[RMDB]
This 177-nucleotide RNA was probed chemically with 2A3 and DMS. It was measured as part of the RMDB library OK1LIB. The RNA was probed in 150 mM KOAc, 10 mM MgCl2 and 150 mM bicine (pH 8.5) at 24 C. The DMS profile rests on 4,608 reads. For 2A3, 1,740 sequencing reads were counted.
RNA sequence: GGGAACGACUCGAGUAGAGUCGAAAAGAGCAUUGAGAAGGUGCGGAACGAGAUCCAGUGGAGAAGGAGGAUGCGGGGGAUAAGAGAGGAGGUCCUUCGUGGGCUUCUGCCGGAGGCUGAGAAGUAACCUGAGAGUGUAGUUCGCUACACUCUCAGGAAAAGAAACAACAACAACAAC
Reactivity to 2A3 in 0.01 (KOAc 150mM, MgCl2 10mM, bicine 150mM(pH8.5), 24C), signal-to-noise 3, nucleotides 027 to 126: g070a010g000c060a010u120u210g040a070g030a160a010g060g020u060g040c040g040g080a050a050c080g030a020g020a120u070c040c030a040g050u050g050g060a070g000a030a070g050g040a020g000g020a000u060g020c020g020g030g000g000g020a010u080a160a070g040a010g000a020g070g020a000g000g040u030c020c000u040u060c080g110u220g030g010g000c000u010u000c010u040g000c000c030g030g000a020g020g000c060u020g000a000g010a160a000g030u080a030a060
Reactivity to DMS in 0.01 (KOAc 150mM, MgCl2 10mM, bicine 150mM(pH8.5), 24C), signal-to-noise 3, nucleotides 027 to 126: g000a090g020c060a070u000u020g000a140g000a110a070g000g010u000g000c040g000g000a090a060c080g010a070g000a100u020c070c040a080g030u040g030g010a120g000a070a050g000g000a060g010g000a030u010g000c070g000g000g000g000g000a050u040a080a050g010a110g000a130g010g000a040g010g010u000c000c030u000u020c130g010u020g010g000g020c020u000u000c010u010g010c060c040g000g000a100g000g000c010u000g020a080g000a070a110g000u040a060a160